[RMDB]
An RNA of 177 nucleotides, treated with DMS and 2A3 and read out base by base. Conditions: 150 mM KOAc, 10 mM MgCl2 and 150 mM bicine (pH 8.5), 24 C. The DMS profile rests on 3,366 reads. The data come from the RNA Mapping Database (RMDB), library OK1LIB. DMS adducts were read by reverse transcription with MarathonRT. The 2A3 profile rests on 3,828 reads. Values cover nucleotides 27 to 126.
RNA sequence: GGGAACGACUCGAGUAGAGUCGAAAAGAAAGUGCUUAAACCGUGUGGACACGAAUGGCUAUAACCACGGAAACCUGAGGAAACAGGAAGCCACAACGCAAGCCAUGUGGUUAGCACACGGAAGAAAAGUAUCCUAUCGGUUCGCCGAUAGGAUACUAAAAGAAACAACAACAACAAC
Reactivity to DMS in 0.01 (KOAc 150mM, MgCl2 10mM, bicine 150mM(pH8.5), 24C), signal-to-noise 3, nucleotides 027 to 126: g020a010a050a070g040u010g020c080u000u020a150a090a100c000c020g030u000g000u000g030g000a090c030a120c020g000a160a070u010g010g000c000u000a060u060a100a120c150c090a090c140g020g000a070a080a090c000c010u000g000a190g010g030a170a280a200c050a000g000g000a130a020g030c000c030a050c150a050a090c170g020c130a050a050g000c000c000a050u000g030u010g030g010u030u000a150g020c040a020c000a030c030g000g000a050a080g000a020a030a040
Reactivity to 2A3 in 0.01 (KOAc 150mM, MgCl2 10mM, bicine 150mM(pH8.5), 24C), signal-to-noise 4, nucleotides 027 to 126: g180a000a100a000g080u060g070c040u100u130a060a010a050c000c020g000u020g020u030g030g110a020c010a010c100g130a150a040u040g000g000c000u040a020u090a300a050c070c040a060c090g050g000a070a090a030c000c000u040g030a080g030g300a100a050a010c000a010g010g000a020a010g060c020c000a030c070a140a000c090g100c110a030a010g000c000c000a000u010g000u000g010g030u080u010a010g010c010a000c000a000c000g050g040a060a030g050a030a110a000